[RMDB]
RNA sequence: GGGAACGACUCGAGUAGAGUCGAAAAAGUAAAGAUAAACUUACCAGUGUAAGUAUAGUCUUCUUUUGUGCGAAUUAGUGGCUCAUAAACUAAUUCCUCUACUCCAAAAGAUUCUAUCGUUUGCACGCCGUGUCAAGUUGUUCGCAACUUGACACGGAAAAGAAACAACAACAACAAC
Reactivity to 2A3 in 0.01 (KOAc 150mM, MgCl2 10mM, bicine 150mM(pH8.5), 24C), signal-to-noise 4, nucleotides 027 to 126: a010g130u170a060a020a000g050a080u080a090a140a010c010u030u060a020c020c050a140g020u030g000u230a010a000g010u010a020u060a040g020u020c010u080u090c010u020u000u000u050g080u030g040c080g020a000a000u000u000a010g000u000g090g000c100u050c230a120u120a140a080a010c000u000a010a000u030u010c000c000u020c040u040a050c040u040c020c010a040a060a000a000g020a040u060u000c020u050a080u070c040g070u010u010u030g050c060a030c030g010